RNA sequence: GGGAACGACUCGAGUAGAGUCGAAAAAAUCCUUGAAAAGCCGAAGGAUUUAAAAAGUCUUGCACUCAUCCGUACUCAUAUCCGCAUCAGGUCCUCAAGGUGAACAGCCUCUGGUUAAUAGAAUAAUGUGAAAUUACAAUUUCGAUUGUAAUUUCACAAAAGAAACAACAACAACAAC
Reactivity to 2A3 in 0.01 (KOAc 150mM, MgCl2 10mM, bicine 150mM(pH8.5), 24C), signal-to-noise 5, nucleotides 027 to 126: a000a000u020c010c000u000u000g070a190a150a030a000g100c060c040g040a020a000g000g010a000u040u070u180a130a100a010a010a000g050u010c020u040u050g010c020a010c020u030c040a080u020c020c020g020u040a040c040u060c040a020u060a050u130c020c020g020c020a040u040c030a070g040g010u040c000c010u030c020a030a030g040g010u050g030a060a010c030a020g010c010c000u020c030u040g040g030u080u080a070a070u070a210g110a150a100u170a110a040u100
Reactivity to DMS in 0.01 (KOAc 150mM, MgCl2 10mM, bicine 150mM(pH8.5), 24C), signal-to-noise 3, nucleotides 027 to 126: a010a020u000c000c000u010u000g010a100a180a160a220g010c150c070g040a030a050g000g000a000u020u010u000a050a060a160a190a090g000u030c040u010u000g020c030a070c030u020c050a100u000c020c030g000u020a090c060u000c030a080u020a070u020c010c040g010c020a110u020c090a080g010g030u010c010c040u010c060a070a060g010g020u010g000a110a070c100a130g000c020c010u000c050u000g000g000u010u010a030a080u020a090g000a080a070u040a060a120u010
Source: RMDB libraries RFM100 and RFMREP, as collected in RNAgym. An RNA of 177 nucleotides, treated with 2A3 and DMS and read out base by base. DMS adducts were read by reverse transcription with MarathonRT. 2A3 adducts were read by reverse transcription with SuperScript II with manganese. The 2A3 profile rests on 3,114 reads.